[RMDB]
Structure probing data (2A3) for a 207-nucleotide construct.
Reactivities are rounded to 0.1 and cut off at 0 and 3.
The 2A3 profile rests on 316 reads.
The data come from the RNA Mapping Database (RMDB), library OK3TST.

RNA sequence: GGGAACGACUCGAGUAGAGUCGAAAAUACUUUUGGUCAUUCAUUCAUUCAAAAACAUUUACUCCAUAUCUUCUCUGGCAUUUAGAUGUUAAUGAGACAAAAGAAAAUAACUUGAUCCCGAUAGUGGCAAAGGGGAAAGACCAGGGCUGGGAGUCAACGACGAUCCAGUAUUCGUACUGGAUCGUCGAAAAGAAACAACAACAACAAC
Reactivity to 2A3 in 0.01 (KOAc 150mM, MgCl2 10mM, bicine 150mM(pH8.5), 24C), signal-to-noise 1, nucleotides 027 to 156: u090a010c020u090u010u060u040g080g020u000c000a020u020u070c000a000u150u000c010a020u160u000c090a090a050a000a090a120c070a080u150u150u050a020c000u000c030c000a030u040a300u220c110u240u020c060u010c010u010g030g030c010a010u110u130u110a090g000a020u020g010u060u110a080a110u070g010a000g000a070c100a020a020a000a000g080a060a130a040a040u260a080a060c030u030u060g030a080u090c000c000c000g050a060u070a060g160u240g200g010c070a090a070a060g000g000g000g090a000a020a100g080a050c030c000a020g000g000g090c020u090g000g000g000a060g020u000c000a020a000